[RMDB]
RNA sequence: GGGAACGACUCGAGUAGAGUCGAAAAUGCUCUAUCCAUUCAGGGUAACUCUAUCAUGACUAGCGUGAAUAGUAACGUUCGGGUUAGAAAGCUCAUGAGACAAUGUGGAAGUCCGAGUAGCCUAAACUGUAAACAGACGGUUCGCCGUCUGUUUACAAAAAGAAACAACAACAACAAC
Reactivity to 2A3 in 0.01 (KOAc 150mM, MgCl2 10mM, bicine 150mM(pH8.5), 24C), signal-to-noise 2, nucleotides 027 to 126: u090g010c000u000c000u000a040u010c000c000a030u080u110c080a070g030g010g080u030a040a030c030u000c060u090a060u080c020a020u050g050a090c030u020a000g010c100g300u000g020a060a020u110a110g130u110a060a050c020g000u040u000c030g000g000g070u000u000a010g120a040a060a000g000c000u000c010a040u020g000a020g010a060c070a080a020u090g000u040g060g000a100a030g020u020c000c000g010a040g010u030a010g030c000c000u010a050a080a080c080
Reactivity to DMS in 0.01 (KOAc 150mM, MgCl2 10mM, bicine 150mM(pH8.5), 24C), signal-to-noise 2, nucleotides 027 to 126: u000g000c000u000c010u000a080u010c010c020a100u000u040c120a120g020g010g000u020a060a030c020u040c070u030a160u000c040a060u030g010a090c030u000a030g010c010g000u010g000a040a060u000a050g000u010a080a060c240g000u000u010c000g000g000g010u000u010a000g000a060a080a140g000c300u000c010a010u000g000a060g010a070c140a120a130u010g000u010g000g000a080a110g000u010c050c060g050a070g000u000a080g000c010c000u020a050a060a070c200
This 177-nucleotide RNA was probed chemically with 2A3 and DMS.
2A3 adducts were read by reverse transcription with SuperScript II with manganese.
DMS adducts were read by reverse transcription with MarathonRT.
As a SHAPE reagent, 2A3 marks flexible, mostly unpaired nucleotides at the ribose 2'-OH.
High DMS reactivity at an A or C suggests that its Watson-Crick edge is free.
It was measured as part of the RMDB libraries RFM100 and RFMREP.